[RMDB]
RNA sequence: GGGAACGACUCGAGUAGAGUCGAAAAGAAAGAAAGAAAGCUGACCCUUCUGCUGACGGAUCUUGUGGAGCACCACAGUGCAGAAUGGGAGAGAAGCUUUAAUGCCGACCGUCUGGGCAGCCUUGAAAAAACGGAUUCUUCUUCGGAAGAAUCCGAAUCAAGAGGAUACGUUCGCGUAUCCUCUUGAAAAAGAAACAACAACAACAAC
Reactivity to DMS in 0.01 (KOAc 150mM, MgCl2 10mM, bicine 150mM(pH8.5), 24C), signal-to-noise 1, nucleotides 027 to 156: g000a170a080a140g000a090a170a130g010a050a060a020g000c080u000g000a260c000c010c010u000u000c000u000g000c000u000g000a170c110g000g010a080u030c050u000u020g020u000g010g030a180g030c190a090c010c000a010c030a090g020u000g000c020a000g010a010a020u000g010g000g000a100g010a150g030a080a010g010c020u000u010u000a050a150u000g020c000c030g010a120c010c030g000u020c080u000g010g010g000c010a090g020c020c000u010u000g000a000a080a070a050a120a280c030g010g010a010u000u000c010u000u000c010u010u010c300g050g010a030a010g000a010a010u020c010c000g010a010a020
Reactivity to 2A3 in 0.01 (KOAc 150mM, MgCl2 10mM, bicine 150mM(pH8.5), 24C), signal-to-noise 1, nucleotides 027 to 156: g030a000a070a030g040a040a050a020g030a050a070a010g000c040u030g130a070c000c000c000u010u010c030u030g010c030u060g060a030c050g080g030a070u110c030u060u050g010u040g050g020a070g180c110a120c050c000a000c010a000g040u040g050c000a000g030a100a030u160g050g000g000a000g090a000g010a010a010g000c000u020u000u060a090a050u070g000c000c010g000a100c000c020g020u000c030u120g020g050g000c000a030g000c000c020u040u130g000a030a000a040a030a040a040c010g000g000a000u000u000c000u020u010c000u020u010c140g050g010a010a010g000a000a000u000c000c000g000a000a000